[RMDB]
RNA sequence: GGGAACGACUCGAGUAGAGUCGAAAAGUAGAGAUUAACACACAAACGAUACCCGUUUCCGGAAAGAUAAUCUUCACGCAGACCGGGUACCGGGCACGGGGAAGCAUCUCACGUAAUAUCGAAGCGGAGCCGGGUUAUAGUUCGCUAUAACCCGGCUAAAAGAAACAACAACAACAAC
Reactivity to 2A3 in 0.01 (KOAc 150mM, MgCl2 10mM, bicine 150mM(pH8.5), 24C), signal-to-noise 3, nucleotides 027 to 126: g040u120a020g000a010g000a010u180u230a290a020c030a000c030a010c040a130a120a010c080g020a080u120a160c000c030c000g030u000u000u000c000c010g000g040a050a100a000g060a030u110a220a090u040c030u050u050c100a050c200g110c100a020g030a120c000c110g040g000g040u020a030c030c010g000g000g000c000a010c020g010g000g000g000a010a010g020c000a010u030c000u000c010a030c000g010u010a000a120u050a120u190c090g000a130a000g040c000g060g060
Reactivity to DMS in 0.01 (KOAc 150mM, MgCl2 10mM, bicine 150mM(pH8.5), 24C), signal-to-noise 2, nucleotides 027 to 126: g000u000a110g000a160g000a000u000u000a110a210c060a100c090a110c110a090a050a220c090g000a060u000a170c060c010c000g000u000u000u000c070c030g000g000a070a030a160g040a130u000a020a150u000c040u000u020c230a030c170g020c130a020g010a080c110c000g000g010g000u000a170c020c000g000g000g090c090a030c000g010g020g020g010a070a060g000c100a070u030c010u000c070a040c010g000u040a110a130u020a080u020c040g000a140a140g000c000g000g010